[RMDB]
RNA sequence: GGGAACGACUCGAGUAGAGUCGAAAAUUCUGCUUCUUUCAUUACAAGUUCACCAGCAGUUACCAACGUUUCUUUAUUCGCUAAUGCUAUGUCUAUUCCCUUCUUUAUAGCACAAAGAGUUGGGACUCACCGCUCCUACUUUCGAGUAGGAGCGGUGAAAAGAAACAACAACAACAAC
Reactivity to 2A3 in 0.01 (KOAc 150mM, MgCl2 10mM, bicine 150mM(pH8.5), 24C), signal-to-noise 2, nucleotides 027 to 126: u160u020c050u000g090c020u090u090c000u070u120u100c040a140u090u070a240c110a170a080g060u000u100c040a070c130c000a010g000c010a010g000u040u090a120c010c010a000a000c090g030u010u050u050c040u000u140u110a120u190u090c080g040c120u110a060a060u110g000c030u000a090u040g130u020c000u020a110u050u040c000c020c000u030u020c020u000u180u090a180u120a080g120c110a020c070a130a080a000g000a000g030u000u000g000g000g000a000c000u000